[RMDB]
RNA sequence: GGGAACGACUCGAGUAGAGUCGAAAAGUAAAUAAAGCGCACCUAUAUGGAGGUGCGCAACCAGCGUGACCUAGGAACACGCAUCCACGCGUCUCCUAAGACGCGAAAGGUAUUCCAAAUAAAAAAACCUAUAGUUACGGUUCGCCGUAACUAUAGGAAAAGAAACAACAACAACAAC
Reactivity to 2A3 in 0.01 (KOAc 150mM, MgCl2 10mM, bicine 150mM(pH8.5), 24C), signal-to-noise 4, nucleotides 027 to 126: g020u040a000a070a240u120a090a150a020g020c010g000c000a000c000c000u070a060u030a120u300g270g030a010g000g020u000g000c000g010c000a000a000c010c010a020g000c000g000u010g030a040c020c060u110a090g010g100a140a010c010a000c000g010c010a010u030c020c000a030c020g020c000g000u000c020u030c030c040u090a130a090g010a000c010g000c010g010a090a030a000g030g000u010a030u020u040c030c020a070a090a040u300a110a080a020a010a010a020a040
Reactivity to DMS in 0.01 (KOAc 150mM, MgCl2 10mM, bicine 150mM(pH8.5), 24C), signal-to-noise 3, nucleotides 027 to 126: g000u000a040a080a100u000a030a110a150g000c000g010c000a000c000c000u010a170u010a140u010g010g000a070g000g030u000g010c030g000c000a010a020c120c060a190g010c010g010u000g000a100c110c080u000a140g000g010a080a120c030a000c030g000c000a120u010c050c070a150c030g020c000g010u000c010u000c250c170u000a140a030g000a030c000g000c010g010a010a020a070g000g000u000a060u000u000c020c040a020a090a070u030a010a010a080a110a050a120a120